This 207-nucleotide RNA was probed chemically with DMS and 2A3.
The reactions ran in a buffer of 150 mM KOAc, 10 mM MgCl2 and 150 mM bicine (pH 8.5), at 24 C.
For DMS, 2,810 sequencing reads were counted.
[RMDB]
RNA sequence: GGGAACGACUCGAGUAGAGUCGAAAAAGAGACUUCGGUCUCUAAUACCCGUAGGUGCUACGUAACAUCGGUAGGGAGAUGACAUUUCGAAAGAGAUGCGAACAUCGAGGAUCUACCGUGGUAGCACCUAAACGGAUCUUACGAGUUUCGACUCGAACAAAGAUAUUCGUUUCGACGAAUAUCUUUGAAAAGAAACAACAACAACAAC
Reactivity to DMS in 0.01 (KOAc 150mM, MgCl2 10mM, bicine 150mM(pH8.5), 24C), signal-to-noise 1, nucleotides 027 to 156: a040g010a000g030a020c000u000u000c300g060g020u000c000u000c000u000a070a110u000a090c070c000c030g070u010a030g020g000u010g010c000u000a000c030g020u000a100a170c080a040u000c020g020g000u000a000g020g000g010a070g000a080u000g000a120c000a020u000u020u000c000g000a160a090a300g000a030g030a000u000g000c020g010a160a210c000a030u000c000g060a190g000g020a080u000c000u000a000c010c030g010u010g030g000u000a010g010c000a040c010c000u000a000a030a020c030g010g000a050u000c090u000u000a140c040g010a080g030u000u000u010c100g000a100c050u000c000g000a100a280
Reactivity to 2A3 in 0.01 (KOAc 150mM, MgCl2 10mM, bicine 150mM(pH8.5), 24C), signal-to-noise 3, nucleotides 027 to 156: a010g010a000g000a000c010u060u100c240g110g000u000c000u000c000u000a020a030u090a060c000c020c000g020u040a010g000g010u000g000c010u010a010c000g130u160a170a120c040a210u170c040g000g020u000a010g000g000g000a000g000a000u000g070a100c000a010u000u000u010c020g040a050a050a040g010a020g000a000u020g040c160g180a080a030c000a000u010c000g010a230g040g010a000u010c000u000a000c000c000g010u000g030g000u000a000g010c000a000c000c000u000a010a000a000c020g000g050a020u030c040u080u140a030c020g010a000g030u050u100u180c140g140a040c010u030c040g020a040a030